[RMDB]
RNA sequence: GGGAACGACUCGAGUAGAGUCGAAAAGCCAUGUGACUUUUGUCGCAUGGCGACGACGUAGUUUUCUACGUCGGAGAGUCGUCUACCUUUCGCCCUGGUAGGCCUCUCUGCCGAACAGGACUUUUGUCGUGUGAGGUAGUGAGUGAUUUGGGCCUCAGAUAUGACCAUGAUUCGUCAUGGUCAUAUCAAAAGAAACAACAACAACAAC
Reactivity to 2A3 in 0.01 (KOAc 150mM, MgCl2 10mM, bicine 150mM(pH8.5), 24C), signal-to-noise 4, nucleotides 027 to 156: g000c000c000a000u010g010u000g000a010c050u120u130u230u300g010u020c010g000c010a000u000g000g000c010g000a000c000g000a000c000g000u030a030g000u000u120u190u210c010u000a000c000g010u000c000g000g020a060g000a010g060u100c030g000u010c000u000a010c000c000u030u120u050c020g000c010c010c000u000g010g010u010a020g000g010c000c000u000c000u000c000u010g000c000c010g000a020a010c010a010g060g030a000c020u110u160u200u300g030u010c190g150u000g000u010g000a040g020g000u010a010g010u000g010a000g000u050g120a160u150u130u190g000g000g000c000c020u040c060a010
Reactivity to DMS in 0.01 (KOAc 150mM, MgCl2 10mM, bicine 150mM(pH8.5), 24C), signal-to-noise 2, nucleotides 027 to 156: g010c000c000a030u000g020u020g010a000c010u000u010u000u020g000u010c010g040c000a010u000g000g000c010g000a000c010g020a020c000g030u000a010g030u000u010u010u000c010u000a010c000g030u000c000g020g000a150g000a070g020u000c050g040u010c010u010a090c020c000u000u000u000c130g020c010c010c060u010g000g000u000a070g040g010c040c020u010c040u000c010u000g000c000c010g010a300a090c030a050g000g000a050c010u020u010u000u010g020u000c020g030u010g010u010g000a300g030g010u000a020g020u010g010a080g030u010g000a210u010u010u010g020g010g050c060c000u010c060a300